[RMDB]
RNA sequence: GGGAACGACUCGAGUAGAGUCGAAAAUUGCCGGUGUAAGUCCGGUCACGGUAAUCGCCAGUGAGCCGUGUAGUUAAACUCGGUGCGUUGUAGUAAUACAGGGUGCUAAGCGAGUGGAUAAAGUAACAUAUAAUAGUUGCUUCGGCAACUAUUAUAUAAAAGAAACAACAACAACAAC
Reactivity to DMS in 0.01 (KOAc 150mM, MgCl2 10mM, bicine 150mM(pH8.5), 24C), signal-to-noise 9, nucleotides 027 to 126: u010u010g010c000c000g000g000u000g000u020a120a290g010u010c000c000g000g000u010c010a000c000g010g000u000a090a150u000c020g000c080c100a150g010u010g010a300g000c010c000g010u000g010u020a090g010u010u010a070a120a040c010u000c010g000g020u000g010c020g000u000u000g020u000a030g000u040a130a120u000a020c020a030g010g000g030u000g000c020u010a090a100g020c060g000a030g010u010g000g010a130u020a070a070a100g010u020a090a100c170
Reactivity to 2A3 in 0.01 (KOAc 150mM, MgCl2 10mM, bicine 150mM(pH8.5), 24C), signal-to-noise 6, nucleotides 027 to 126: u100u050g010c010c000g000g020u000g000u030a050a010g020u010c010c010g010g010u000c000a000c010g000g010u060a110a120u040c020g080c140c060a170g040u090g200a010g020c010c000g000u010g030u030a030g010u000u140a040a110a010c010u000c020g020g040u030g030c300g220u020u000g000u000a060g020u030a060a110u010a040c010a010g030g030g020u050g020c030u050a090a030g150c050g020a000g010u030g010g020a100u110a110a140a040g130u110a100a020c030